[RMDB]
RNA sequence: GGGAACGACUCGAGUAGAGUCGAAAAGCACUUGAGACCAGCCCUUGAUGCAGUUGGGCAAAGGCGGCUCCGGUACUGAUUGCCGCCUGAACGGAAGCCACAUCACCGGUCAGACGGAUUAACAUCCCUACGAUAUGGGUUUCGACCCAUAUCGUAGAAAAGAAACAACAACAACAAC
Reactivity to DMS in 0.01 (KOAc 150mM, MgCl2 10mM, bicine 150mM(pH8.5), 24C), signal-to-noise 5, nucleotides 027 to 126: g010c040a060c050u010u000g010a090g010a130c030c030a150g000c020c020c030u000u010g000a080u010g020c040a110g010u000u000g020g010g000c040a020a090a050g020g020c020g000g010c000u000c040c070g000g000u000a070c090u000g010a110u010u000g020c000c010g010c010c000u010g000a030a020c050g010g010a110a080g000c050c100a060c110a060u010c120a090c010c020g010g000u000c040a040g000a050c040g000g000a050u000u000a070a130c190a120u000c030c030
Reactivity to 2A3 in 0.01 (KOAc 150mM, MgCl2 10mM, bicine 150mM(pH8.5), 24C), signal-to-noise 4, nucleotides 027 to 126: g000c000a000c060u060u110g010a020g070a250c010c020a030g050c030c000c010u070u090g100a120u110g050c050a040g150u200u160g070g030g010c020a050a040a020g040g010c030g010g000c020u010c020c020g030g060u100a100c050u090g090a170u070u170g010c000c000g000c020c010u010g000a030a010c010g000g040a050a030g070c040c010a100c010a070u090c030a020c030c020g030g030u010c000a000g020a030c030g020g020a040u090u080a070a000c010a100u060c030c000